[RMDB]
RNA sequence: GGGAACGACUCGAGUAGAGUCGAAAAAUCCUCAGGUUCAUAACCGUGAUGAUUGGGUGUUCAUGCUCCAUGCAUGACAUGUGCCUCCUUUGAACCUUGUUACGACCUUGGCACAUUACCCAUCUGAAAAAGACGUUCGCGUUCGCGCGAACGUCAACAAUCAAUUCCAGUUCGCUGGAAUUGAUUGAAAAGAAACAACAACAACAAC
Reactivity to 2A3 in 0.01 (KOAc 150mM, MgCl2 10mM, bicine 150mM(pH8.5), 24C), signal-to-noise 6, nucleotides 027 to 156: a000u030c000c000u020c010a010g000g010u000u000c010a010u060a150a140c100c120g130u120g050a080u060g010a020u070u290g020g000g000u070g030u110u030c000a010u010g000c020u100c230c130a110u290g000c000a010u010g010a010c000a010u010g000u000g010c010c000u050c030c030u040u040u030g010a010a010c010c000u040u120g090u090u100a110c100g060a100c050c060u050u120g000g000c000a010c000a020u040u130a020c000c000c000a000u010c020u040g070a080a040a030a050a060g000a000c010g000u000u000c010g000c010g030u030u040c210g010c020g010c000g100a000a000c010g000u000c000a000a000
Reactivity to DMS in 0.01 (KOAc 150mM, MgCl2 10mM, bicine 150mM(pH8.5), 24C), signal-to-noise 3, nucleotides 027 to 156: a080u000c010c000u010c050a010g000g010u000u000c080a060u010a070a090c050c040g000u010g020a110u000g010a080u010u000g020g020g010u000g030u000u010c010a030u010g010c020u000c170c220a190u000g030c000a020u000g000a020c300a150u000g050u010g010c000c010u010c110c040u000u010u000g010a040a050c010c030u000u000g020u000u010a140c140g010a070c110c080u000u000g040g020c010a020c010a080u000u000a080c020c010c000a070u010c020u030g000a050a050a110a120a190g010a030c000g010u000u000c000g040c010g040u000u020c300g040c000g050c000g000a000a010c010g010u000c000a010a030